RNA sequence: GGGAACGACUCGAGUAGAGUCGAAAAUCGAGGAAUCUAAUAAAGCUAGGUCACUGGUGUUUUCAGGUGCUUCUCAAAGGAUUGCCGUAGGGGUAGGAUAUCAGGAUGUGGGAGCACAGGUGCCACCACAGCACUAGUGAUGGAGAGUCAUUGCCCCCGAGAGUUCACAGUUCGCUGUGAACUCUCGAAAAGAAACAACAACAACAAC
Reactivity to 2A3 in 0.01 (KOAc 150mM, MgCl2 10mM, bicine 150mM(pH8.5), 24C), signal-to-noise 2, nucleotides 027 to 156: u090c020g010a030g050g050a100a010u000c030u060a090a070u100a230a180a000g070c040u030a010g040g050u030c010a010c030u030g000g000u000g040u050u070u110u120c090a030g120g000u000g000c020u030u050c010u030c030a080a050a000g080g020a040u040u210g120c020c010g000u110a100g000g000g000g010u040a000g030g000a020u070a030u070c110a060g150g010a060u130g050u120g100g010g000a000g030c010a000c000a000g130g070u060g070c030c030a050c040c000a040c050a000g020c040a030c090u070a010g000u010g060a040u050g030g000a060g000a000g080u000c010a040u030u140g050c000c000c000c000
Chemical mapping of a 207-nucleotide RNA with 2A3. Conditions: 150 mM KOAc, 10 mM MgCl2 and 150 mM bicine (pH 8.5), 24 C.